[RMDB]
RNA sequence: GGGAACGACUCGAGUAGAGUCGAAAAAAACUUUUGUGACUUGCUGAAACGGGACUAAUCUCCUCACCGAGGCUAAGCAAGUAAAAUACGCCUCUCAUAUCCUUACCUGAGGGUGGUAAGGAGAUAACCUGCAACGCUUCCUUCGGGAAGCGUUGAAUCUAAUCGUAAGUUUCGACUUACGAUUAGAAAAAGAAACAACAACAACAAC
Reactivity to DMS in 0.01 (KOAc 150mM, MgCl2 10mM, bicine 150mM(pH8.5), 24C), signal-to-noise 1, nucleotides 027 to 156: a080a000a100c040u000u000u000u000g020u000g030a120c080u010u010g020c000u000g060a080a070a120c020g000g020g000a080c070u000a140a060u000c060u010c010c000u000c040a030c010c010g000a110g010g000c040u000a170a130g040c020a010a020g030u000a050a070a060a070u010a140c060g010c000c020u000c030u000c110a070u000a070u000c030c000u000u010a030c100c070u000g020a110g000g020g030u020g020g030u040a000a000g020g000a010g030a060u000a040a090c030c000u010g000c030a000a020c010g000c000u000u000c010c000u000u000c300g070g010g020a030a000g020c000g010u000u000g000a020a060
Reactivity to 2A3 in 0.01 (KOAc 150mM, MgCl2 10mM, bicine 150mM(pH8.5), 24C), signal-to-noise 4, nucleotides 027 to 156: a000a000a000c130u140u090u060u120g070u030g050a070c020u030u030g010c020u050g020a060a040a080c050g010g010g010a010c030u070a040a100u030c010u010c020c020u030c010a030c030c050g000a000g010g000c030u070a060a020g040c030a040a070g070u150a030a050a010a030u090a030c060g010c010c000u000c010u000c020a050u030a040u150c000c010u020u030a090c010c030u100g050a050g030g030g010u010g010g000u010a000a000g010g010a010g000a000u040a020a100c020c040u040g010c010a000a000c000g000c010u000u000c000c010u030u050c100g080g010g000a000a000g010c000g000u000u010g000a000a000